[RMDB]
RNA sequence: GGGAACGACUCGAGUAGAGUCGAAAAGACACCGCGCAGAUCCCAAUGGCGGCUAAUAACGCCAUAAUAAAUGCGCGUAAAUGGCGUAAAAUAUAGACACAAUAUAAGUGAAAGCCGCCAAAGCAAAAGAAAGAAUGUAGUUCGCUACAUUCUUUCUAAAAGAAACAACAACAACAAC
Reactivity to 2A3 in 0.01 (KOAc 150mM, MgCl2 10mM, bicine 150mM(pH8.5), 24C), signal-to-noise 2, nucleotides 027 to 126: g070a030c020a000c110c030g000c000g000c020a010g000a110u010c000c010c000a020a040u030g000g010c010g040g000c000u060a150a140u070a160a050c010g020c020c020a000u010a040a020u060a000a040a030u150g000c030g000c000g020u000a030a060a010u020g010g000c010g000u000a030a180a210a020u210a020u040a040g160a090c020a000c020a180a100u210a030u090a300a150g010u000g040a170a030a000g000c000c030g000c010c020a000a010a000g000c010a050a030a020
Reactivity to DMS in 0.01 (KOAc 150mM, MgCl2 10mM, bicine 150mM(pH8.5), 24C), signal-to-noise 2, nucleotides 027 to 126: g010a140c050a040c160c010g000c010g010c020a200g010a060u000c000c000c000a160a130u000g030g010c000g010g030c010u000a100a100u020a120a020c010g000c010c000a000u000a010a080u010a070a130a070u010g000c010g000c010g000u010a040a130a050u000g000g030c010g000u000a060a030a130a130u000a090u010a110g010a220c030a010c010a050a060u010a060u000a100a110g020u000g010a100a120a050g000c020c000g010c000c020a030a040a150g000c150a070a040a090